[RMDB]
RNA sequence: GGGAACGACUCGAGUAGAGUCGAAAAUCUGCACUGCGUGAGGCCGGUAAACGGAACAGCGAAAAGGAUUCCAGCGGUAUGGUGCGUAGAUUCUGGGCGCGAGCAUGCGCUUCAGCCUCUGACUUGGUUCAAACGGUCCACUAUUUUUUCCUCGAUCACUCCAAACGUUGUUCGCAACGUUUGGAGUAAAAGAAACAACAACAACAAC
Reactivity to 2A3 in 0.01 (KOAc 150mM, MgCl2 10mM, bicine 150mM(pH8.5), 24C), signal-to-noise 1, nucleotides 027 to 156: u010c020u050g000c040a000c110u060g020c010g080u050g060a080g060g000c030c040g000g100u100a020a020a170c050g000g050a050a000c020a030g030c020g030a130a110a020a000g070g000a010u010u020c000c030a010g010c020g080g000u150a080u070g010g000u040g040c030g010u030a040g000a040u120u010c080u070g010g030g050c020g000c000g000a050g180c120a070u090g000c030g000c010u060u030c000a010g000c020c020u020c010u070g050a090c000u090u040g050g000u080u070c040a220a010a000c080g010g000u000c000c000a000c050u070a160u000u100u000u010u030u000c010c010u020c010g110a120u060c020